An RNA of 177 nucleotides, treated with 2A3 and DMS and read out base by base.
Reactivities are given for positions 27 through 126.
Conditions: 150 mM KOAc, 10 mM MgCl2 and 150 mM bicine (pH 8.5), 24 C.
The DMS profile rests on 5,089 reads.

RNA sequence: GGGAACGACUCGAGUAGAGUCGAAAAAGCAGUCGAUUCGUCGACUGCUAAUGGGUCGGGACUACAUCACAGGUUCUUCGCUAGCCCUCUUUGGACCAGUAUAAAAGAGCUUAUUCGUAAGCUCUAAGUCAUGUAACAGAUUCGUCUGUUACAUGACAAAAGAAACAACAACAACAAC
Reactivity to 2A3 in 0.01 (KOAc 150mM, MgCl2 10mM, bicine 150mM(pH8.5), 24C), signal-to-noise 5, nucleotides 027 to 126: a010g010c000a000g000u010c000g010a010u050u090c110g060u010c000g100a030c000u000g000c000u000a000a040u100g010g000g020u060c010g020g010g000a030c020u090a030c060a110u140c060a040c020a090g060g000u070u010c000u050u060c020g010c060u050a070g010c000c010c000u040c040u090u080u060g030g000a030c010c010a060g060u090a110u050a190a140a020a000g000a000g000c000u020u020a030u040u100c150g060u030a010a000g000c000u000c000u010a020a000
Reactivity to DMS in 0.01 (KOAc 150mM, MgCl2 10mM, bicine 150mM(pH8.5), 24C), signal-to-noise 5, nucleotides 027 to 126: a020g020c010a010g010u000c000g010a030u000u020c230g020u000c000g000a010c000u000g000c000u000a020a030u010g000g010g010u000c060g010g000g010a240c010u000a070c110a050u010c110a070c140a090g010g000u000u000c030u000u000c080g020c100u000a070g010c020c010c020u000c100u000u000u000g020g010a060c010c030a120g020u000a080u010a060a100a100a030g000a020g010c000u000u000a030u000u010c200g010u000a010a000g010c000u000c000u010a020a070